An RNA of 207 nucleotides, treated with DMS and 2A3 and read out base by base. Source: RMDB library RSTRND, as collected in RNAgym. DMS adducts were read by reverse transcription with MarathonRT. For DMS, 2,992 sequencing reads were counted. The reactions ran in a buffer of 150 mM KOAc, 10 mM MgCl2 and 150 mM bicine (pH 8.5), at 24 C.
[RMDB]
RNA sequence: GGGAACGACUCGAGUAGAGUCGAAAAGGGUGGUUUUCCAUCAGCAUUACCCAACACAGCUUUCAAGCUAGUACCGCUAGCGACACACCCUCCCUGUGCUGGAAGCUCCCCACCGCGGGGGGCACCAGCAGCCCAGCGUACCCCUCAAGGCCGCUGCCUUAUGGCUUACGUUCGCGUAAGCCAUAAGAAAAGAAACAACAACAACAAC
Reactivity to DMS in 0.01 (KOAc 150mM, MgCl2 10mM, bicine 150mM(pH8.5), 24C), signal-to-noise 2, nucleotides 027 to 156: g010g020g040u010g000g000u000u000u000u000c020c050a170u000c050a100g020c040a120u000u000a160c040c060c010a120a070c080a060c020a080g040c010u000u000u010c110a110a180g010c020u010a030g000u000a100c010c110g010c010u000a080g030c030g000a100c100a100c040a060c020c000c000u000c020c020c020u010g030u000g030c030u000g010g000a170a100g010c020u010c000c000c000c010a220c160c190g010c200g010g000g030g010g030g050c010a040c020c000a030g010c000a020g000c000c010c000a050g000c000g000u000a070c030c010c030c050u010c090a110a100g000g000c200c030g020c010u000g020c010
Reactivity to 2A3 in 0.01 (KOAc 150mM, MgCl2 10mM, bicine 150mM(pH8.5), 24C), signal-to-noise 3, nucleotides 027 to 156: g040g010g000u000g000g090u040u060u090u060c050c020a090u110c050a050g000c010a060u070u190a170c000c020c040a050a090c120a000c020a020g020c040u110u290u220c180a170a000g000c010u030a000g000u090a150c110c180g000c060u030a010g040c000g150a030c020a010c000a010c110c000c000u030c010c020c010u060g020u010g000c000u000g000g010a110a050g000c000u000c000c020c000c000a090c050c110g060c100g060g000g000g000g020g000c000a000c000c000a000g000c000a000g000c010c000c000a000g030c000g040u240a290c000c000c000c030u130c080a010a020g000g000c020c000g010c000u020g030c010